[RMDB]
RNA sequence: GGGAACGACUCGAGUAGAGUCGAAAAACUUAUCCGGAAUAUAAUUAGCUACGCAAUCAUGCGAGGUCCAGUCGCUUCCGCAACCAUUUUUAAGUUAAUGAGUGAUAGGAGUUAAUGAGUGAUAUAUGAAUGCUAAGCCUACUGCCUACCCCAUUCAUAAUAAAAUGCGAUUCGUCGCAUUUUAUUAAAAAGAAACAACAACAACAAC
Reactivity to 2A3 in 0.01 (KOAc 150mM, MgCl2 10mM, bicine 150mM(pH8.5), 24C), signal-to-noise 3, nucleotides 027 to 156: a000c080u180u090a050u090c030c010g050g030a080a040u110a030u070a140a180u190u060a060g030c030u110a070c030g000c050a080a090u100c020a080u130g010c010g030a040g030g000u000c030c040a020g070u050c020g040c040u050u030c020c030g050c050a020a040c010c000a030u030u020u000u060u230a070a070g020u010u040a040a030u140g010a000g080u080g030a040u040a080g000g000a020g020u060u080a070a060u090g010a030g080u060g060a000u030a010u010a020u150g110a100a030u080g030c030u020a020a030g000c000c000u050a060c040u070g060c000c000u020a040c030c000c000c000a010u080u120c030a010
Reactivity to DMS in 0.01 (KOAc 150mM, MgCl2 10mM, bicine 150mM(pH8.5), 24C), signal-to-noise 3, nucleotides 027 to 156: a080c030u000u000a070u000c000c020g020g000a130a090u000a100u000a080a100u010u010a090g020c020u000a120c060g040c030a100a100u000c090a100u000g010c010g030a130g020g020u000c020c030a110g020u000c040g020c040u000u000c010c020g020c060a070a090c030c030a070u000u010u010u020u000a050a150g010u000u000a020a040u010g010a110g020u010g000a110u000a070g000g000a120g020u000u000a040a070u000g010a120g000u000g010a050u000a110u000a090u000g000a050a080u000g020c040u000a060a080g000c030c030u000a070c090u000g010c020c010u010a120c030c020c010c020a100u000u000c030a190